Chemical mapping of a 177-nucleotide RNA with DMS and 2A3. 2A3 adducts were read by reverse transcription with SuperScript II with manganese.
RNA sequence: GGGAACGACUCGAGUAGAGUCGAAAAAUUGAUUUGAGACGUCGCCUUGCAGUGUUAACUUGGCUCUCAUGAACCUCUUUCAUCUUCCACAAAGGGUAGGCUACGGGUGAAACCUCUUAGGCUAAAACUACUUAGGAGAUUUCGAUCUCCUAAGUAGAAAAGAAACAACAACAACAAC
Reactivity to DMS in 0.01 (KOAc 150mM, MgCl2 10mM, bicine 150mM(pH8.5), 24C), signal-to-noise 4, nucleotides 027 to 126: a090u000u000g000a080u000u010u000g010a090g010a070c110g010u000c060g020c020c010u000u000g020c060a060g030u000g010u010u010a060a070c090u000u000g010g000c030u000c030u010c080a070u000g000a050a080c060c020u000c030u000u000u010c050a040u000c050u000u000c010c020a090c120a050a060a060g010g010g020u010a050g000g020c050u010a050c160g000g010g010u010g010a070a070a100c080c010u000c040u000u000a070g010g010c050u000a030a070a110a110
Reactivity to 2A3 in 0.01 (KOAc 150mM, MgCl2 10mM, bicine 150mM(pH8.5), 24C), signal-to-noise 3, nucleotides 027 to 126: a010u080u100g030a070u030u020u170g050a050g010a020c050g040u060c040g020c020c000u020u060g000c070a050g040u020g020u270u090a040a070c020u010u030g020g030c000u020c000u000c050a020u070g040a040a050c000c010u050c000u030u110u040c030a050u000c030u070u000c010c000a050c050a080a130a020g040g020g050u040a030g040g010c030u060a010c080g050g000g030u050g060a080a070a040c020c010u050c030u070u090a020g050g000c010u040a010a010a050a080
For DMS, 4,414 sequencing reads were counted.